[RMDB]
RNA sequence: GGGAACGACUCGAGUAGAGUCGAAAAGGACCGGCUCAUCUCGACAAGAGGCGGCGGUCCUCAGUGCUCUUACUCUUUUCUGAAAAGAGGAGACUGCUGGACUCGCCGCCCCAGUUCGAGCAUGAGCCAAUUGCCGAACGAGGAUGGCGCGAGAGGAGUAUGUCUGAGACUUCGGUCUCAGACAUACAAAAGAAACAACAACAACAAC
Reactivity to 2A3 in 0.01 (KOAc 150mM, MgCl2 10mM, bicine 150mM(pH8.5), 24C), signal-to-noise 2, nucleotides 027 to 156: g050g010a050c040c050g010g000c000u000c000a000u010c000u010c000g020a000c040a110a100g040a100g030g010c000g000g010c010g000g000u000c000c000u010c000a060g000u120g150c000u000c000u120u130a270c000u030c000u000u100u090u070c240u300g080a140a060a000a000g000a000g000g000a000g000a000c010u020g070c040u000g000g000a020c030u060c300g010c010c000g000c000c000c000c000a050g010u080u030c010g000a000g000c110a000u000g010a000g020c010c000a000a000u020u020g000c020c020g010a050a000c020g010a020g060g000a020u040g030g000c020g020c130g040a050g000a000g070g010a020
This 207-nucleotide RNA was probed chemically with 2A3.
Reactivities are given for positions 27 through 156.
2A3 is a SHAPE reagent: it acylates the 2'-hydroxyl of flexible nucleotides of all four kinds.
The RNA was probed in 150 mM KOAc, 10 mM MgCl2 and 150 mM bicine (pH 8.5) at 24 C.